[RMDB]
RNA sequence: GGGAACGACUCGAGUAGAGUCGAAAACUCAUCUGACCUCAACCAUAAGCCUGUGAAGAAUGCAUGGAGGAACUGUACCAACUUUACAGCCAGGCCAAGGCCCAGUGAGGGGCAGCGACUCGCCCACCACCACACAGCCACACUGGAGCAAAACCGACUUUUACGUGGGUUUCGACCCACGUAAAAGAAAAGAAACAACAACAACAAC
Reactivity to 2A3 in 0.01 (KOAc 150mM, MgCl2 10mM, bicine 150mM(pH8.5), 24C), signal-to-noise 2, nucleotides 027 to 156: c040u030c010a130u050c040u070g080a110c000c000u040c070a030a060c000c020a110u060a210a000g020c050c000u030g050u040g020a040a000g090a080a030u170g050c080a100u100g010g020a040g050g060a050a010c010u060g080u090a090c030c030a130a130c130u060u050u100a130c050a020g040c020c010a030g000g050c020c000a030a000g090g000c030c010c010a000g000u020g040a040g020g030g000g000c030a030g000c010g100a100c020u070c080g010c000c030c000a070c030c010a060c000c000a010c000a010c000a030g000c050c010a000c030a040c090u090g030g000a060g060c020a000a120a000a020c010c000g040a020